[RMDB]
This 177-nucleotide RNA was probed chemically with DMS and 2A3. For 2A3, 5,769 sequencing reads were counted. The RNA was probed in 150 mM KOAc, 10 mM MgCl2 and 150 mM bicine (pH 8.5) at 24 C. The DMS profile rests on 4,016 reads.

RNA sequence: GGGAACGACUCGAGUAGAGUCGAAAAGCUAACCGGAACAAUGAUGCCCUGCGCCAGGCGAAGCAGGAGUCAAAUGAGUACCGGAGACAGGUGCAGUCCCUCACCUGCGAAGUGGAUGCACUCAAAGCCCAAUUUACGGAUUCGUCCGUAAAUUGGGAAAAGAAACAACAACAACAAC
Reactivity to DMS in 0.01 (KOAc 150mM, MgCl2 10mM, bicine 150mM(pH8.5), 24C), signal-to-noise 4, nucleotides 027 to 126: g000c070u030a090a120c000c000g020g030a080a060c060a110a130u000g010a040u020g000c120c020c000u010g000c010g020c130c100a130g020g010c120g030a070a160g010c000a000g000g010a300g000u050c010a010a090a110u040g020a120g000u000a120c020c000g000g000a070g000a090c100a100g000g020u000g010c080a040g000u000c000c000c000u000c020a070c050c060u000g000c100g000a140a020g050u040g000g010a230u000g020c000a030c030u020c110a050a120a120g000
Reactivity to 2A3 in 0.01 (KOAc 150mM, MgCl2 10mM, bicine 150mM(pH8.5), 24C), signal-to-noise 7, nucleotides 027 to 126: g130c060u080a110a040c010c010g000g000a030a030c020a050a090u080g030a040u090g100c050c000c000u020g010c020g040c040c080a210g110g060c100g090a100a010g000c000a000g000g010a010g020u040c010a000a040a180u180g040a080g060u050a090c000c000g000g010a010g040a030c040a010g010g000u000g010c020a030g180u060c010c000c000u010c000a070c010c010u030g060c070g040a050a020g020u080g090g040a090u140g050c040a010c020u080c090a070a090a070g040